[RMDB]
RNA sequence: GGGAACGACUCGAGUAGAGUCGAAAAAGAGUGCAAACUCUAGCUCAAGGCGAUAAUCAAGUGAUCUGUACACAGUAUAAAUUACAACCCAUGCGAAAUGAGCAGGAACUCAGGAUAGCUUUGAAUCACCUAAAACCCAAUUCGUUGGGUUUUAGGUAAAAGAAACAACAACAACAAC
Reactivity to 2A3 in 0.01 (KOAc 150mM, MgCl2 10mM, bicine 150mM(pH8.5), 24C), signal-to-noise 4, nucleotides 027 to 126: a000g020a000g000u050g000c020a060a010a130c010u000c020u020a030g010c010u020c040a020a030g040g010c020g070a090u080a120a090u150c050a070a080g030u030g050a070u020c020u060g030u070a020c130a010c020a070g040u050a040u050a150a150a050u120u070a020c020a020a050c040c000c000a040u090g030c020g060a080a090a130u080g010a040g000c010a020g060g060a040a030c010u010c030a010g090g000a060u070a030g000c010u020u070u050g040a050a050u090c010
Reactivity to DMS in 0.01 (KOAc 150mM, MgCl2 10mM, bicine 150mM(pH8.5), 24C), signal-to-noise 5, nucleotides 027 to 126: a040g010a040g010u010g020c260a100a100a040c000u000c010u010a120g010c040u000c030a060a080g010g030c030g010a080u010a070a090u010c140a080a080g020u000g010a050u010c040u000g010u000a050c050a090c110a120g010u000a060u000a030a030a070u000u010a070c090a090a070c070c010c040a080u020g010c070g010a060a110a100u000g000a070g000c030a070g020g010a050a100c050u000c070a060g000g010a080u000a130g020c040u010u000u010g020a060a080u000c140